[RMDB]
RNA sequence: GGGAACGACUCGAGUAGAGUCGAAAAGCGACGAAGCUGGUCGGGUCCGGGGCCCGACAUUCGUGAUCCACAACCGCUGGGUAAGGCCGCUCGUGAGCUGGCAAAGAAACGCGGCUGGUCGGUGCGGUAGCGAAAAAUUGUUCGCAAUUUUUCGCUAAAAAGAAACAACAACAACAAC
Reactivity to 2A3 in 0.01 (KOAc 150mM, MgCl2 10mM, bicine 150mM(pH8.5), 24C), signal-to-noise 6, nucleotides 027 to 126: g070c040g050a020c010g030a030a020g120c140u210g080g060u000c000g010g000g010u040c100c110g080g020g050g040c010c010c000g000a000c000a010u010u020c010g010u010g010a050u010c010c000a040c010a060a050c020c030g020c010u040g040g010g110u120a110a070g060g000c010c010g030c010u050c050g100u060g070a050g020c040u050g120g010c030a070a090a060g080a010a080a010c070g010c010g010g000c000u020g010g040u030c040g030g050u070g010c010g020g010
Reactivity to DMS in 0.01 (KOAc 150mM, MgCl2 10mM, bicine 150mM(pH8.5), 24C), signal-to-noise 5, nucleotides 027 to 126: g010c100g000a020c010g010a030a060g000c170u000g020g000u010c010g020g000g020u020c040c170g010g010g010g020c000c000c000g010a010c010a030u020u000c000g000u000g010a100u030c020c000a100c170a120a130c030c020g000c010u000g020g030g020u010a250a170g010g010c010c010g000c010u010c100g000u010g000a120g000c010u010g020g020c080a070a110a090g000a050a100a100c130g000c020g010g000c010u010g000g010u010c020g000g010u020g000c020g000g000